[RMDB]
RNA sequence: GGGAACGACUCGAGUAGAGUCGAAAAAAAAAAGCGACCAAAACCUGCAGGAGGAUGGAACACUGGGGGGAGCCGAUACCCAGGACAGGGCAGUCCUGGAGGCAACCGUUAUCCACCUCAGGAAAAAGGAUUAAUAGUACUUCGGUACUAUUAAUCCAAAAGAAACAACAACAACAAC
Reactivity to 2A3 in 0.01 (KOAc 150mM, MgCl2 10mM, bicine 150mM(pH8.5), 24C), signal-to-noise 2, nucleotides 027 to 126: a000a000a000a010a020a030g040c030g030a030c010c020a000a010a020a150c010c020u050g060c120a000g000g040a010g030g010a050u050g010g080a130a070c070a040c300u230g040g020g030g000g000g020a010g010c000c020g010a070u090a110c000c040c010a000g000g010a000c010a030g200g110g020c040a020g010u020c010c000u000g000g030a010g020g000c010a030a010c020c000g050u090u060a040u000c000c000a030c010c000u020c010a000g000g000a030a030a000a000a000
Reactivity to DMS in 0.01 (KOAc 150mM, MgCl2 10mM, bicine 150mM(pH8.5), 24C), signal-to-noise 1, nucleotides 027 to 126: a010a020a070a110a110a140g030c140g020a120c020c060a090a020a060a110c000c000u000g000c220a070g000g000a010g020g000a020u010g010g010a030a030c120a050c100u080g050g010g010g020g000g000a270g020c070c000g000a120u000a140c300c000c010a020g000g010a000c020a050g000g010g000c230a060g030u000c000c000u000g000g000a030g000g030c030a010a120c080c030g000u000u000a140u000c010c000a030c000c000u000c000a000g000g000a030a030a130a130a020
Structure probing data (2A3 and DMS) for a 177-nucleotide construct. 2A3 adducts were read by reverse transcription with SuperScript II with manganese. For DMS the reverse transcriptase was MarathonRT. The 2A3 profile rests on 2,118 reads. It was measured as part of the RMDB library M2PK90.